[RMDB]
RNA sequence: GGGAACGACUCGAGUAGAGUCGAAAAAUUGCAUGCCGUAAGUGUAAUUUAGCUUUCCGGUUAACCACCUCAAAGCUACGCGCUAAUGAUAAUAUCUUAUCAGUUAGAUUCACUGCUAACAAAAUUGCUAGUAUGCAAUCUUCGGAUUGCAUACUAGAAAAGAAACAACAACAACAAC
Reactivity to DMS in 0.01 (KOAc 150mM, MgCl2 10mM, bicine 150mM(pH8.5), 24C), signal-to-noise 2, nucleotides 027 to 126: a020u000u000g010c060a030u010g010c120c130g030u010a070a080g030u010g000u020a030a030u000u000u000a020g000c030u020u000u000c060c040g000g010u010u010a040a090c210c270a120c000c000u020c100a040a020a020g030c000u000a040c230g020c170g020c020u000a020a020u020g000a010u000a020a020u000a130u010c160u020u000a020u000c020a050g020u000u000a020g000a080u000u000c130a030c060u010g020c080u000a010a050c060a040a090a060a120u000u040g020
Reactivity to 2A3 in 0.01 (KOAc 150mM, MgCl2 10mM, bicine 150mM(pH8.5), 24C), signal-to-noise 2, nucleotides 027 to 126: a020u090u060g020c000a000u040g000c040c060g080u090a110a050g000u030g040u050a050a090u040u060u040a000g010c000u010u010u010c040c000g010g000u000u010a040a030c010c030a010c000c030u030c030a020a030a000g000c000u010a020c040g050c020g010c070u030a050a020u040g040a010u000a010a050u070a090u130c130u060u040a020u000c010a060g020u030u010a010g010a080u110u060c060a020c090u050g020c010u030a060a050c020a010a110a040a140u140u140g000
This 177-nucleotide RNA was probed chemically with DMS and 2A3. The DMS profile rests on 1,183 reads. It was measured as part of the RMDB library 15KREP. For 2A3 the reverse transcriptase was SuperScript II with manganese. The reactions ran in a buffer of 150 mM KOAc, 10 mM MgCl2 and 150 mM bicine (pH 8.5), at 24 C. The 2A3 profile rests on 2,005 reads.